[RMDB]
RNA sequence: GGGAACGACUCGAGUAGAGUCGAAAACACUUUCCAAUGAAAAUGCUUAGCAGGCUGCAGGUUGUUUACCGCAGGAAUCGUAAAUGCAAACCGUUCACAGUCCUGCUCAGCUAAGGAGAUAGUAAAGAAACAGUCUUUUAAAUCUGUGACUAUUAAAUCGAUACACAACAUUCGUGUUGUGUAUCGAAAAAGAAACAACAACAACAAC
Reactivity to 2A3 in 0.01 (KOAc 150mM, MgCl2 10mM, bicine 150mM(pH8.5), 24C), signal-to-noise 4, nucleotides 027 to 156: c060a010c010u050u050u000c010c010a040a110u180g110a060a040a040a090u150g000c010u000u000a010g010c000a000g010g010c000u010g010c030a050g000g000u030u020g010u030u090u040a100c090c080g030c120a090g180g120a050a100u160c030g030u040a070a010a000u070g070c090a130a030a020c000c020g040u110u140c090a010c010a030g080u210c000c000u000g000c000u000c000a000g000c000u020a040a040g080g040a070g000a030u080a040g070u100a030a170a110g020a030a110a010c000a020g050u030c070u030u300u080u190a070a150a100u040c010u040g060u030g040a030c030u060a050u150u130a050a070a110
Reactivity to DMS in 0.01 (KOAc 150mM, MgCl2 10mM, bicine 150mM(pH8.5), 24C), signal-to-noise 2, nucleotides 027 to 156: c020a100c170u010u000u000c050c050a160a130u010g020a140a090a040a090u010g040c000u010u000a050g000c000a030g010g040c020u000g010c000a170g030g020u020u010g030u000u000u010a070c020c030g000c070a200g010g020a080a090u010c070g020u010a020a040a030u000g000c100a110a060a080c090c010g030u000u010c170a060c010a060g000u010c000c000u000g030c000u000c090a030g010c010u000a160a110g000g000a170g010a060u000a180g000u010a050a070a040g000a110a130a060c030a030g000u000c060u000u020u010u000a030a170a140u010c010u000g020u000g010a150c020u010a040u000u000a060a070a190

The record gives the reactivity of an RNA of 207 nucleotides to 2A3 and DMS. Reactivities are given for positions 27 through 156. Source: RMDB library OK3TST, as collected in RNAgym. For DMS, 2,496 sequencing reads were counted. For 2A3, 2,028 sequencing reads were counted.